RNA sequence: GGGAACGACUCGAGUAGAGUCGAAAAACCAUCCUCUACCGAAUAAUCGGCACGGAGCGAACGGACAGAAGGCAUGCGAAAGGAUGGGAUCGCAUGUCAGCAUGCGAAAGGAUGGGAAGCAUGCGAAAGGAUGGUACAAGCGUACGGAAACCAUCCACGCAUAGUGGAUAUUCGUAUCCACUAUGCGAAAAGAAACAACAACAACAAC
Reactivity to 2A3 in 0.01 (KOAc 150mM, MgCl2 10mM, bicine 150mM(pH8.5), 24C), signal-to-noise 4, nucleotides 027 to 156: a000c010c000a010u010c010c000u060c030u040a060c030c000g070a110a130u240a290a160u130c040g040g000c100a070c100g080g010a040g040c030g030a040a030c040g010g100a020c010a080g130a110a020g030g000c000a000u000g010c010g000a030a020a020g030g040a070u070g000g050g000a010u010c000g000c000a000u000g000u010c000a000g010c000a000u030g000c010g070a090a030a040g070g030a040u090g020g000g030a000a000g000c000a010u020g010c010g030a070a040a010g030g000a020u040g000g030u050a030c050a050a050g040c040g140u100a060c050g090g050a110a010a010c020c000a000u030c010c030a010
Reactivity to DMS in 0.01 (KOAc 150mM, MgCl2 10mM, bicine 150mM(pH8.5), 24C), signal-to-noise 2, nucleotides 027 to 156: a120c000c010a010u000c000c000u020c010u000a060c020c010g040a140a210u000a080a150u000c010g040g000c030a080c130g040g000a070g020c040g030a150a050c060g040g000a160c070a150g010a100a070g030g000c000a010u000g050c020g050a020a070a100g000g020a060u000g010g020g020a200u000c000g060c000a010u000g010u000c030a120g030c000a010u000g000c020g030a100a070a070g000g000a050u000g020g000g010a110a160g000c020a010u000g030c000g000a070a030a030g010g030a040u000g000g000u000a060c080a030a110g000c050g010u000a110c100g000g000a100a060a080c010c020a020u010c000c000a150
Conditions: 150 mM KOAc, 10 mM MgCl2 and 150 mM bicine (pH 8.5), 24 C. Structure probing data (2A3 and DMS) for a 207-nucleotide construct. The DMS profile rests on 4,110 reads. Source: RMDB library OK3TST, as collected in RNAgym. For DMS the reverse transcriptase was MarathonRT. For 2A3 the reverse transcriptase was SuperScript II with manganese.